[RMDB]
RNA sequence: GGGAACGACUCGAGUAGAGUCGAAAAGAUUAUCUGUUAGCGCCUAGAAAGGGGUAGUGAUGGAUGAAACAACGAAGCAGCUUUUCACCUUUCUGGGAACCGCGGGUGGAGUUGCUUUUCUCACAAUGAUUGCUAACGCUGUCAAGAAAUUGUACAAUGUAUUUCUUAUAUUCGUAUAAGAAAUACAAAAAGAAACAACAACAACAAC
Reactivity to DMS in 0.01 (KOAc 150mM, MgCl2 10mM, bicine 150mM(pH8.5), 24C), signal-to-noise 1, nucleotides 027 to 156: g030a190u010u000a020u000c040u040g010u000u000a080g030c040g000c070c020u050a110g020a040a100a130g000g020g000g040u000a090g020u000g000a070u010g000g020a060u000g010a140a170a090c070a080a130c160g010a090a100g020c010a080g010c020u010u000u020u010c050a040c010c010u000u010u000c070u000g040g010g000a060a040c070c070g060c240g000g010g040u000g010g000a180g010u010u000g000c030u000u000u000u000c030u000c020a070c120a070a060u000g000a180u000u000g010c020u010a070a190c180g050c040u010g000u000c040a040a170g000a070a090a120u010u000g010u010a080c090a140a290
Reactivity to 2A3 in 0.01 (KOAc 150mM, MgCl2 10mM, bicine 150mM(pH8.5), 24C), signal-to-noise 2, nucleotides 027 to 156: g030a040u140u100a090u110c060u030g060u020u080a090g030c030g030c010c030u070a060g130a080a080a040g100g000g010g020u090a090g070u060g030a060u080g060g020a050u090g070a040a090a100c060a090a040c100g060a010a000g000c000a010g000c010u060u050u150u190c030a050c020c000u110u110u090c100u110g010g040g090a100a070c090c050g010c040g050g000g000u020g000g000a010g000u020u000g020c000u030u000u010u020c040u010c010a020c000a010a060u110g040a100u040u060g020c000u040a080a060c090g020c050u010g010u050c010a050a010g000a080a150a040u150u070g020u020a050c050a070a090

Chemical mapping of a 207-nucleotide RNA with DMS and 2A3. For DMS the reverse transcriptase was MarathonRT. High DMS reactivity at an A or C suggests that its Watson-Crick edge is free. Conditions: 150 mM KOAc, 10 mM MgCl2 and 150 mM bicine (pH 8.5), 24 C. It was measured as part of the RMDB library OK3TST.